Structure probing data (DMS) for a 177-nucleotide construct. It was measured as part of the RMDB library TTRINS. Reactivities are given for positions 27 through 126. Conditions: 150 mM KOAc, 10 mM MgCl2 and 150 mM bicine (pH 8.5), 24 C.
RNA sequence: GGGAACGACUCGAGUAGAGUCGAAAAGAUAUGGAGAUCAUGCGAAGUCUCAGUAGGGAGUCUGGUGGGUCGGAAACGACCCGAGAGGACGACGAUCUACUGAGGACUUCGCAUGAUCUCCUAAGUCCAUUAAGAUAGUCUUCGGACUAUCUUAAUGAAAAGAAACAACAACAACAAC
Reactivity to DMS in 0.01 (KOAc 150mM, MgCl2 10mM, bicine 150mM(pH8.5), 24C), signal-to-noise 3, nucleotides 027 to 126: g010a130u000a300u000g000g000a020g010a010u000c010a010u000g000c000g020a030a020g030u000c000u010c000a000g000u000a010g000g000g020a190g010u010c000u010g010g040u020g010g020g000u010c010g000g000a100a100a230c010g010a010c000c000c000g010a040g000a220g020g010a060c040g020a070c220g010a220u010c000u000a020c000u000g000a030g010g010a020c010u000u000c000g000c000a000u000g000a000u000c000u010c000c000u000a010a090g010u000c060